RNA sequence: GGGAACGACUCGAGUAGAGUCGAAAAGUAUAGAAGCAUGAGACCGCAUGCGGUAUACGAUGAAUCUCGGUCGAAUCCGUUGUGCGAAAGCACUUCGGUAAUGCAUAUCGGUAGGCAGAUCCGCCCGGAUCAGCUACCGUAAUUAGUACGGGCAAGACAUUAAUCCUGAGUUCGCUCAGGAUUAAUGAAAAGAAACAACAACAACAAC
Reactivity to DMS in 0.01 (KOAc 150mM, MgCl2 10mM, bicine 150mM(pH8.5), 24C), signal-to-noise 2, nucleotides 027 to 156: g010u000a070u000a050g010a230a260g030c000a030u010g010a110g000a120c070c050g040c050a050u000g000c010g000g010u000a060u000a030c000g020a190u010g020a140a170u000c050u000c000g070g030u000c040g000a200a140u000c000c010g060u000u000g010u000g070c010g000a160a130a240g000c010a000c010u000u000c000g030g000u010a040a030u010g020c070a110u000a150u000c020g040g020u000a020g050g000c060a170g020a030u000c000c000g020c130c150c120g000g000a030u000c010a180g010c020u010a020c020c010g000u000a000a040u000u000a100g000u000a080c010g000g000g000c050a080a150g020a240
Reactivity to 2A3 in 0.01 (KOAc 150mM, MgCl2 10mM, bicine 150mM(pH8.5), 24C), signal-to-noise 3, nucleotides 027 to 156: g060u040a050u080a140g140a120a050g010c000a000u000g010a000g020a130c000c060g030c030a030u040g030c040g030g000u070a090u050a030c090g000a020u130g080a100a200u050c050u020c070g010g040u010c020g020a030a050u030c000c000g000u010u000g000u010g000c000g020a080a000a010g010c000a000c000u000u000c000g000g000u040a080a020u120g080c070a050u060a070u250c050g020g000u000a010g160g140c090a030g000a000u030c000c000g020c040c020c010g000g000a010u000c000a010g050c000u000a000c000c000g000u010a030a010u050u100a010g110u020a050c020g000g000g000c040a030a000g080a010